[RMDB]
RNA sequence: GGGAACGACUCGAGUAGAGUCGAAAAGGAAAUUUGAUUGUAUUGCAUAUACAACUAUGCGAUGCACUUUGUUCAUUUUAACUUUGGAUAUAUGUGCCUUGCUAUGAACGCGUUCAUUUUUAAGUGAGGACGGUUAUUCUUUCGAGAAUAACCGUCCAAAAGAAACAACAACAACAAC
Reactivity to 2A3 in 0.01 (KOAc 150mM, MgCl2 10mM, bicine 150mM(pH8.5), 24C), signal-to-noise 2, nucleotides 027 to 126: g030g000a090a120a090u110u140u130g020a100u080u000g000u090a000u000u000g010c000a000u040a000u000a080c030a120a040c180u040a030u020g000c000g000a000u000g000c030a030c060u030u140u160g080u000u000c000a020u030u050u000u060a230a090c070u170u060u000g000g000a110u070a000u030a010u070g060u030g060c000c000u020u020g000c030u060a000u120g080a050a090c080g030c030g050u080u040c010a070u080u000u020u020u150a110a080g020u040g050a020

Structure probing data (2A3) for a 177-nucleotide construct. The RNA was probed in 150 mM KOAc, 10 mM MgCl2 and 150 mM bicine (pH 8.5) at 24 C. The 2A3 profile rests on 592 reads. 2A3 adducts were read by reverse transcription with SuperScript II with manganese.